This 177-nucleotide RNA was probed chemically with DMS and 2A3. Values cover nucleotides 27 to 126. For DMS the reverse transcriptase was MarathonRT. The DMS profile rests on 1,647 reads. Source: RMDB library OK2TRN, as collected in RNAgym.

RNA sequence: GGGAACGACUCGAGUAGAGUCGAAAAUAGAAGGUGAAGACAUUAGUGAGUCUACUAUUAGCUCUUCAGAGGUAUAUGACAUCCUUACUACUUGUGUAAGACUAGAGGCACUGUUUGAUUUGAAGAACAAUCCAUGGCGAUUCGUCGCCAUGGAUUGAAAAGAAACAACAACAACAAC
Reactivity to DMS in 0.01 (KOAc 150mM, MgCl2 10mM, bicine 150mM(pH8.5), 24C), signal-to-noise 2, nucleotides 027 to 126: u000a070g010a100a130g030g020u000g000a050a040g000a040c040a050u000u000a060g000u010g000a160g010u000c070u030a060c050u010a100u000u000a080g010c110u000c020u000u000c040a050g000a060g010g010u020a050u000a080u000g020a080c080a040u000c010c040u000u000a090c060u000a030c100u020u000g040u010g000u010a030a040g000a110c070u000a080g010a060g000g000c040a030c080u000g010u000u000u010g000a110u000u000u000g000a040a110g000a030a140
Reactivity to 2A3 in 0.01 (KOAc 150mM, MgCl2 10mM, bicine 150mM(pH8.5), 24C), signal-to-noise 1, nucleotides 027 to 126: u140a000g100a020a000g060g060u050g050a070a000g010a020c000a040u060u090a000g010u100g100a080g110u080c080u100a040c010u000a050u060u070a020g020c040u040c000u040u040c020a000g020a020g150g100u160a120u060a090u170g090a030c000a070u180c000c000u060u010a000c010u000a020c000u050u070g080u080g020u220a000a100g080a100c050u010a050g020a080g060g000c010a030c120u080g110u030u080u060g170a260u110u000u050g050a040a010g080a060a000